[RMDB]
RNA sequence: GGGAACGACUCGAGUAGAGUCGAAAAAAGAUAAGAAAAUUGCUCACACAAUGGCUACCAACACAGCGGAGGACGUGUUUUUGCAACCCCCGAGGUCUGCUCUUCACGAUGCUCAGAAGCCUCAGAUGGAUAAGAUGAUGCUAACAAUCGCUCGAUGAUACGAUUAAUUUUUCGAAAUUAAUCGUAUAAAAGAAACAACAACAACAAC
Reactivity to DMS in 0.01 (KOAc 150mM, MgCl2 10mM, bicine 150mM(pH8.5), 24C), signal-to-noise 3, nucleotides 027 to 156: a050a090g010a150u010a070a120g020a080a070a140a110u010u000g010c030u000c070a120c110a060c060a120a100u010g000g020c040u000a090c030c020a060a070c070a040c050a060g020c030g020g010a120g000g020a080c050g020u000g010u000u000u010u010u000g010c010a070a130c030c010c010c070c070g010a090g020g000u010c030u010g000c010u000c040u000u000c060a080c050g010a100u000g020c030u000c020a050g010a090a150g020c010c030u000c020a060g000a140u000g020g000a130u000a040a100g000a100u010g010a080u000g020c040u000a070a080c070a060a080u000c070g020c060u010c030g010a170u000g000
Reactivity to 2A3 in 0.01 (KOAc 150mM, MgCl2 10mM, bicine 150mM(pH8.5), 24C), signal-to-noise 3, nucleotides 027 to 156: a000a000g120a070u200a090a060g050a080a110a080a030u120u070g000c020u030c030a060c010a010c010a050a160u050g030g020c010u040a050c020c020a060a030c050a020c000a040g070c040g040g000a010g030g030a020c010g030u020g060u000u040u040u100u090g040c020a030a100c000c010c030c040c030g010a080g000g010u010c050u040g000c010u000c000u040u040c000a020c040g040a050u060g000c020u000c030a050g020a150a010g010c000c000u030c010a020g030a120u100g040g010a020u020a100a060g020a020u080g010a020u070g000c020u060a100a000c030a070a060u060c070g010c050u010c030g080a070u170g030
An RNA of 207 nucleotides, treated with DMS and 2A3 and read out base by base. 2A3 adducts were read by reverse transcription with SuperScript II with manganese. The data come from the RNA Mapping Database (RMDB), library OK3TST. DMS adducts were read by reverse transcription with MarathonRT. The RNA was probed in 150 mM KOAc, 10 mM MgCl2 and 150 mM bicine (pH 8.5) at 24 C.